This 177-nucleotide RNA was probed chemically with 2A3. Source: RMDB library OK1LIB, as collected in RNAgym.
RNA sequence: GGGAACGACUCGAGUAGAGUCGAAAAUCACCACGCAUCCGCCGUACAGAAGCGGUCCCCACAGCUCCCAAACCGAGAAGUCGAAGGCGAUGGAGUGGAACAUCGUCCAACGGUCCGCGCUGGUGAAGCGGUACUCCACUUUCGAGUGGAGUACCGCAAAAGAAACAACAACAACAAC
Reactivity to 2A3 in 0.01 (KOAc 150mM, MgCl2 10mM, bicine 150mM(pH8.5), 24C), signal-to-noise 2, nucleotides 027 to 126: u070c010a040c020c010a030c040g000c030a080u050c030c020g060c040c010g050u160a070c030a100g050a010a000g130c000g010g080u100c030c000c000c000a160c040a000g010c060u080c020c010c000a000a120a150c000c020g060a060g060a130a000g010u040c010g110a060a000g010g000c000g000a030u050g040g060a080g100u090g000g050a000a040c000a010u010c000g140u020c000c040a040a010c020g050g030u040c130c050g000c000g040c080u000g000g020u120g020a040a040
Reactivities are rounded to 0.1 and cut off at 0 and 3.
For 2A3, 793 sequencing reads were counted.